The record gives the reactivity of an RNA of 207 nucleotides to 2A3. As a SHAPE reagent, 2A3 marks flexible, mostly unpaired nucleotides at the ribose 2'-OH. Values cover nucleotides 27 to 156. The RNA was probed in 150 mM KOAc, 10 mM MgCl2 and 150 mM bicine (pH 8.5) at 24 C.
RNA sequence: GGGAACGACUCGAGUAGAGUCGAAAAUUGACCAAUAGAAUGUGGCAGAAGUGAUGUUAUGUGACUUUUGGGGCUAGGCCUCGAGAGACCUUGCAGCUUAUGUUUUGGAUUCCUCAGAAGUUGUCCUGAGACUGCCAUGCUAUGAGGGCUAGGGAGGCAUACCGUUAGAUUUCGAUCUAACGGUAUGAAAAGAAACAACAACAACAAC
Reactivity to 2A3 in 0.01 (KOAc 150mM, MgCl2 10mM, bicine 150mM(pH8.5), 24C), signal-to-noise 1, nucleotides 027 to 156: u120u120g060a030c020c020a020a010u070a050g180a080a140u160g010u030g070g020c020a010g000a100a010g030u050g090a140u070g050u150u160a080u070g130u130g050a100c000u040u020u050u030g000g000g000g000c030u140a090g100g110c010c000u050c040g030a050g000a010g000a010c000c040u030u020g040c000a030g000c020u090u060a070u190g090u080u150u110u130g000g050a050u100u070c010c010u000c040a070g030a150a020g090u080u060g010u030c000c000u030g020a030g010a060c010u030g000c000c000a030u030g020c000u050a000u160g050a060g000g000g000c000u090a040g000g000g000a020g000g040